[RMDB]
Source information: Chemical mapping of a 177-nucleotide RNA with DMS. DMS adducts were read by reverse transcription with MarathonRT. The data come from the RNA Mapping Database (RMDB), library OK2TST. The DMS profile rests on 1,720 reads. The RNA was probed in 150 mM KOAc, 10 mM MgCl2 and 150 mM bicine (pH 8.5) at 24 C.
RNA sequence: GGGAACGACUCGAGUAGAGUCGAAAAUAACAUUACCGAUGAAAGGCUUUUCUGGUCUUUGUGGCUAAGUUAGGCAGUGAUAGCUUCUGUUUAGAAACUUCUUAUUUCCAGAAAGGAGAUGCCCCACUGUAAAGGCUAGUUUCGACUAGCCUUUACAAAAAGAAACAACAACAACAAC
Reactivity to DMS in 0.01 (KOAc 150mM, MgCl2 10mM, bicine 150mM(pH8.5), 24C), signal-to-noise 2, nucleotides 027 to 126: u020a090a120c070a130u000u000a130c030c040g020a110u020g010a060a090a090g020g010c000u000u000u000u010c120u000g010g000u000c030u000u000u000g010u010g010g020c080u010a040a060g030u000u000a050g000g010c030a050g010u010g000a140u010a050g000c050u000u000c020u000g010u010u000u000a070g010a060a040a070c060u000u000c060u010u000a100u010u000u000c020c020a140g000a040a030a080g000g000a060g000a090u000g010c040c000c000c040a110c240